[RMDB]
RNA sequence: GGGAACGACUCGAGUAGAGUCGAAAAAAUCCUCCUUGGGAAGUGAAGCUCAGGCUGUGAUUUCAAGCCAGGGGGCGUUUUUCUGUGACUGGAUGAAAAGCACCUCCGGGGCUUGAAGCUCACAGUUACAUUGAGAUGUAUUCGUACAUCUCAAUGUAAAAGAAACAACAACAACAAC
Reactivity to 2A3 in 0.01 (KOAc 150mM, MgCl2 10mM, bicine 150mM(pH8.5), 24C), signal-to-noise 3, nucleotides 027 to 126: a000a000u020c010c000u030c010c000u110u060g010g010g010a090a080g100u110g140a070a030g030c000u010c040a020g040g000c000u000g000u000g000a020u000u020u000c000a000a000g000c010c020a030g000g000g010g000g000c000g000u010u000u000u000u000c020u040g130u110g170a150c140u180g110g140a100u080g000a040a000a000a010g000c000a030c010c000u000c000c020g070g030g010g000c000u010u010g000a000a000g000c010u010c000a000c000a000g000u000u000
Reactivity to DMS in 0.01 (KOAc 150mM, MgCl2 10mM, bicine 150mM(pH8.5), 24C), signal-to-noise 2, nucleotides 027 to 126: a070a050u000c000c030u010c060c050u000u000g000g000g010a060a060g000u030g000a110a080g000c040u000c050a080g000g010c000u000g000u000g000a050u020u000u000c010a010a020g010c000c000a290g000g000g000g000g010c070g010u000u010u000u000u030c000u000g010u010g010a150c190u020g030g010a180u010g000a020a010a010a030g020c000a030c000c010u000c010c000g010g020g000g010c000u000u000g000a010a020g010c180u000c000a010c010a000g000u000u000